This 177-nucleotide RNA was probed chemically with 2A3 and DMS. For 2A3, 20,093 sequencing reads were counted. The reactions ran in a buffer of 150 mM KOAc, 10 mM MgCl2 and 150 mM bicine (pH 8.5), at 24 C.
[RMDB]
RNA sequence: GGGAACGACUCGAGUAGAGUCGAAAAAUCCAAAAGAUGGAAUAUGUACGCACUGCAACGAACACGAAAUGUGCAAAGCAUCAAUUUCUGCUCGUAGUGUACGUACGUGCAUACGAGUCUUGAAUGCCUGGUUUUCAUAAUUCGUUAUGAAAACCAGAAAAGAAACAACAACAACAAC
Reactivity to 2A3 in 0.01 (KOAc 150mM, MgCl2 10mM, bicine 150mM(pH8.5), 24C), signal-to-noise 9, nucleotides 027 to 126: a000u050c030c000a040a090a020a010g070a030u100g050g060a080a040u050a010u070g020u020a010c010g000c000a000c010u030g000c020a030a030c030g030a050a010c060a010c140g050a030a040a030u100g020u020g000c010a110a090a050g030c010a020u070c040a060a140u030u010u010c010u010g010c010u000c000g030u030a120g230u020g000u040a020c110g010u050a030c070g000u000g000c000a000u000a000c010g010a000g030u000c000u030u090g070a140a060u090g070c010
Reactivity to DMS in 0.01 (KOAc 150mM, MgCl2 10mM, bicine 150mM(pH8.5), 24C), signal-to-noise 5, nucleotides 027 to 126: a080u030c010c010a110a060a030a010g010a030u010g000g030a220a180u000a010u010g020u000a020c080g010c010a000c000u010g000c040a040a050c010g010a050a040c030a040c200g010a000a010a010u000g000u010g000c020a120a130a120g000c010a000u040c100a090a030u000u000u000c020u000g010c050u000c000g000u000a060g000u000g020u020a000c180g030u010a020c060g020u000g020c000a000u000a000c000g010a300g000u000c030u000u000g010a110a080u040g010c110